RNA sequence: GGGAACGACUCGAGUAGAGUCGAAAAAUGUCAGAUCCACCAGAUAGGUUAAGCAGUAUGAAGAGAGAACUUGGAAUCUUCUCUUUUUGUCGCUCAUGGAUUCAAAAAGAUAUCCACAUAUAGGAUCUAGUUCUUGGAAUUCGAACACCUUUCUGGCCUCAGCAGAUGAUUUCGAUCAUCUGCUGAGAAAAGAAACAACAACAACAAC
Reactivity to DMS in 0.01 (KOAc 150mM, MgCl2 10mM, bicine 150mM(pH8.5), 24C), signal-to-noise 2, nucleotides 027 to 156: a050u020g000u000c030a120g010a180u000c020c030a090c020c000a020g010a030u000a030g030g050u000u000a070a040g030c020a090g060u000a020u000g000a010a010g000a060g000a000g000a020a010c090u020u000g020g020a260a180u010c220u000u010c010u000c000u000u000u000u000u010g020u000c020g000c040u020c090a150u000g040g010a020u020u010c020a060a060a090a000a020g000a090u010a090u000c020c040a110c150a080u000a210u020a100g000g000a060u000c090u000a100g020u010u000c020u020u000g000g010a030a060u000u010c030g010a110a100c110a040c000c000u000u000u000c000u010g000g010c240
Reactivity to 2A3 in 0.01 (KOAc 150mM, MgCl2 10mM, bicine 150mM(pH8.5), 24C), signal-to-noise 4, nucleotides 027 to 156: a000u150g080u070c050a010g040a170u040c000c040a010c000c000a020g010a020u040a010g000g030u050u070a050a010g010c020a020g030u230a030u100g010a010a000g010a000g010a010g020a040a010c070u210u180g120g150a160a130u070c030u100u010c000u010c000u000u000u000u020u030g040u030c030g030c020u050c060a070u180g030g020a010u040u020c060a160a130a030a030a000g020a030u060a020u040c050c010a030c050a060u300a060u100a190g010g010a020u040c040u080a060g130u060u040c010u040u040g050g050a020a020u040u000c010g010a070a010c020a020c060c020u020u040u000c000u000g010g000c000